[RMDB]
RNA sequence: GGGAACGACUCGAGUAGAGUCGAAAAUGUCACCCCUGGGCUUUGUUGCUGAGGCUUUGUGCCGUCUUAUUGUUUAUCACCGGAUGGAGCAUCACGGGCUUCGCUCUGAUGUCUCCAGUGGUGACAGCCAACGUGUACUCUUCGGAGUACACGUUGGAAAAGAAACAACAACAACAAC
Reactivity to DMS in 0.01 (KOAc 150mM, MgCl2 10mM, bicine 150mM(pH8.5), 24C), signal-to-noise 2, nucleotides 027 to 126: u010g000u000c080a040c030c010c040c030u020g000g010g020c040u000u000u000g000u010u000g010c050u020g020a100g010g010c010u010u000u020g010u010g050c020c020g010u000c050u020u020a090u010u010g000u020u000u010a190u010c050a060c160c110g010g000a220u000g010g000a040g010c060a060u010c000a010c220g000g000g000c020u000u000c210g000c050u000c020u010g000a010u000g010u010c020u010c000c000a030g010u010g010g010u000g010a020c220a030g010
Structure probing data (DMS) for a 177-nucleotide construct. The RNA was probed in 150 mM KOAc, 10 mM MgCl2 and 150 mM bicine (pH 8.5) at 24 C. Values cover nucleotides 27 to 126.